Chemical mapping of a 177-nucleotide RNA with DMS. It was measured as part of the RMDB library OK2TST. The RNA was probed in 150 mM KOAc, 10 mM MgCl2 and 150 mM bicine (pH 8.5) at 24 C. For DMS the reverse transcriptase was MarathonRT.

RNA sequence: GGGAACGACUCGAGUAGAGUCGAAAACGUUAAAGCUUACUUUUACUGAUUGUCCGUACGGCCCGAACACCGUAAAGUAACAUUGUUGUGACGUUGAAGUAGAUGACGUAGAUGAAGAAGAUGUAGAUCACCCAGCGUAUUUCGAUACGCUGGGUGAAAAAGAAACAACAACAACAAC
Reactivity to DMS in 0.01 (KOAc 150mM, MgCl2 10mM, bicine 150mM(pH8.5), 24C), signal-to-noise 1, nucleotides 027 to 126: c050g000u000u020a080a130a110g010c130u000u010a050c010u000u000u000u010a120c010u000g000a090u000u010g000u000c020c030g030u010a080c150g020g010c110c080c020g000a050a090c090a070c100c080g000u000a000a000a040g010u020a040a090c160a220u020u010g000u010u000g010u010g050a050c120g020u000u000g000a040a100g020u000a010g000a090u000g020a030c080g010u000a040g000a090u010g030a080a090g000a110a080g000a000u000g000u000a100g000a180